RNA sequence: GGGAACGACUCGAGUAGAGUCGAAAAGCGGAAUUCGUUCCGCCGGUCGGGGUCUUCUUGAGUUCGGUCGCAACAGCCUACUGAAGCCUCCACGGUAGGACAUGCACCGAACAAUGAUGGAAGACGGAGGCACCCUCAUUCUCCAAUUCGUUGGAAAGCUUUCAUCCUCAUUCGUGAGGAUGAAAGCAAAAGAAACAACAACAACAAC
Reactivity to 2A3 in 0.01 (KOAc 150mM, MgCl2 10mM, bicine 150mM(pH8.5), 24C), signal-to-noise 1, nucleotides 027 to 156: g000c000g050g100a000a000u180u160c160g010u170u000c000c000g000c000c010g070g060u130c160g020g010g030g050u000c000u000u010c000u000u040g050a040g010u000u000c020g000g000u080c200g020c010a000a080c060a130g030c000c000u050a050c000u040g070a260a050g030c050c040u010c010c000a000c030g000g040u020a020g000g050a030c060a120u090g000c000a020c000c000g020a000a000c020a030a060u240g060a030u060g000g060a030a050g010a010c000g000g030a050g040g000c000a030c010c000c000u080c030a180u220u120c020u000c050c010a080a110u230u180c030g040u120u020g100g000a090a230a040
Chemical mapping of a 207-nucleotide RNA with 2A3.
2A3 is a SHAPE reagent: it acylates the 2'-hydroxyl of flexible nucleotides of all four kinds.
2A3 adducts were read by reverse transcription with SuperScript II with manganese.
The data come from the RNA Mapping Database (RMDB), library RNAMAK.
Conditions: 150 mM KOAc, 10 mM MgCl2 and 150 mM bicine (pH 8.5), 24 C.